[RMDB]
Annotation: This 177-nucleotide RNA was probed chemically with DMS and 2A3. The DMS profile rests on 1,662 reads.
RNA sequence: GGGAACGACUCGAGUAGAGUCGAAAAUUUGAGGAUGACGACACCCAUUGCUUGGGACUGUCUGAUCCAUUGGAAUUGAGUAUUGAUUCCCAGGAGAGGGCUCAGUCUAGUGAGGAUGACAACAAUGUCAAGAACGGGGGUUCGCCCCCGUUCUUGAAAAAGAAACAACAACAACAAC
Reactivity to DMS in 0.01 (KOAc 150mM, MgCl2 10mM, bicine 150mM(pH8.5), 24C), signal-to-noise 2, nucleotides 027 to 126: u010u010u020g000a030g000g010a030u030g000a240c210g000a070c000a090c050c030c000a090u010u010g020c140u000u000g020g000g020a100c200u000g010u000c000u000g010a300u010c030c000a080u030u010g000g000a040a080u060u020g030a050g000u000a030u020u010g000a210u000u010c020c020c050a020g010g000a080g010a180g000g000g000c000u000c000a010g030u000c040u000a040g010u030g000a070g000g000a120u030g000a040c050a050a040c180a090a090u020g000
Reactivity to 2A3 in 0.01 (KOAc 150mM, MgCl2 10mM, bicine 150mM(pH8.5), 24C), signal-to-noise 1, nucleotides 027 to 126: u180u080u110g250a100g000g110a140u100g050a130c100g000a030c000a150c000c000c000a110u010u170g180c090u130u130g000g000g000a100c200u000g010u000c000u030g000a000u050c030c010a030u080u100g030g000a040a030u150u020g050a050g040u090a060u160u050g110a140u000u000c000c000c050a000g000g090a140g000a000g020g000g000c000u010c040a000g010u090c000u000a000g120u010g050a030g080g070a050u070g040a000c000a000a110c020a020a240u300g050
Overview
Conditions: 150 mM KOAc, 10 mM MgCl2 and 150 mM bicine (pH 8.5), 24 C.